RNA sequence: GGGAACGACUCGAGUAGAGUCGAAAAACAUACCCUGGGUCCCCCUACGGGCUAAAACUGAUAGGGUCAGGGAAGACUGGGUACCGGGACCAGGGCAAAACGCCGGGAUUUAGGGCCCCGGGAUGGGUAUCUUAACUUAUUUCGAUAAGUUAAGAUAAAAAGAAACAACAACAACAAC
Reactivity to 2A3 in 0.01 (KOAc 150mM, MgCl2 10mM, bicine 150mM(pH8.5), 24C), signal-to-noise 1, nucleotides 027 to 126: a010c030a040u180a110c010c010c020u080g230g000g090u050c000c000c000c000c000u010a020c040g040g040g000c100u170a190a080a000a130c000u000g030a260u050a090g220g030g010u060c030a020g060g030g020a060a020g070a030c090u080g000g110g000u100a110c100c040g000g000g020a030c040c020a060g020g020g000c010a130a190a040a000c030g040c010c000g000g020g010a050u140u110u110a100g030g000g090c040c000c030c010g010g000g040a050u100g160g100g000
Reactivity to DMS in 0.01 (KOAc 150mM, MgCl2 10mM, bicine 150mM(pH8.5), 24C), signal-to-noise 2, nucleotides 027 to 126: a110c060a070u010a110c010c000c000u010g030g020g010u010c040c040c020c050c110u000a020c020g000g010g030c090u000a020a050a180a160c020u000g010a130u010a110g000g020g020u000c070a040g010g000g000a150a050g000a100c050u000g010g000g030u000a050c060c150g000g000g010a110c020c010a010g000g000g040c060a020a030a090a090c110g010c010c040g020g000g020a110u000u000u010a100g020g030g000c170c010c010c050g020g000g010a030u020g020g000g010
The record gives the reactivity of an RNA of 177 nucleotides to 2A3 and DMS. The reactions ran in a buffer of 150 mM KOAc, 10 mM MgCl2 and 150 mM bicine (pH 8.5), at 24 C. It was measured as part of the RMDB library OK2TRN. Values cover nucleotides 27 to 126.